[RMDB]
RNA sequence: GGGAACGACUCGAGUAGAGUCGAAAAACAACAGAUAGCUGGAACCAGCGUAGAAUUCUACGCAUAUCCAUAGCGAAUGGUACCUGUAAAGAAAAUAACUGUGGAUGUACAAGUACCAACAGCCGCAGAUGCCAUGGUGAUGUCAAUCACAUAUGCACUGACUCCUGAUAUUCGUAUCAGGAGUCAGAAAAGAAACAACAACAACAAC
Reactivity to 2A3 in 0.01 (KOAc 150mM, MgCl2 10mM, bicine 150mM(pH8.5), 24C), signal-to-noise 5, nucleotides 027 to 156: a000c030a000a020c010a030g070a130u180a060g010c030u010g060g020a090a160c060c030a030g000c000g000u000a000g060a210a300u290u150c000u010a000c000g000c010a030u040a020u050c030c010a050u100a030g020c010g070a050a050u060g010g000u010a010c010c010u010g020u090a080a110a050g130a050a120a030a040u120a080a040c020u040g000u020g050g030a020u040g010u050a020c010a080a060g010u030a050c000c000a000a050c030a050g030c000c020g020c020a020g040a090u070g000c020c020a050u060g030g030u010g000a020u030g120u210c070a090a020u000c010a010c000a040u120a030u100g020c010a000
Reactivity to DMS in 0.01 (KOAc 150mM, MgCl2 10mM, bicine 150mM(pH8.5), 24C), signal-to-noise 2, nucleotides 027 to 156: a090c030a030a140c040a090g000a110u010a100g000c000u000g050g060a080a170c120c040a130g050c010g040u000a080g010a280a160u010u010c020u000a020c000g000c020a140u010a090u010c020c020a120u000a070g000c050g010a110a170u010g000g010u010a000c030c000u010g020u000a090a130a160g000a150a100a080a200u010a050a130c030u010g010u010g010g000a110u000g000u000a130c050a000a150g000u020a030c040c010a050a100c020a120g000c000c080g060c030a120g000a130u000g020c030c040a050u000g000g010u010g020a050u000g010u010c100a100a090u030c030a030c050a030u000a120u000g010c010a260
Source information:
Conditions: 150 mM KOAc, 10 mM MgCl2 and 150 mM bicine (pH 8.5), 24 C. Structure probing data (2A3 and DMS) for a 207-nucleotide construct. It was measured as part of the RMDB library OK3TST.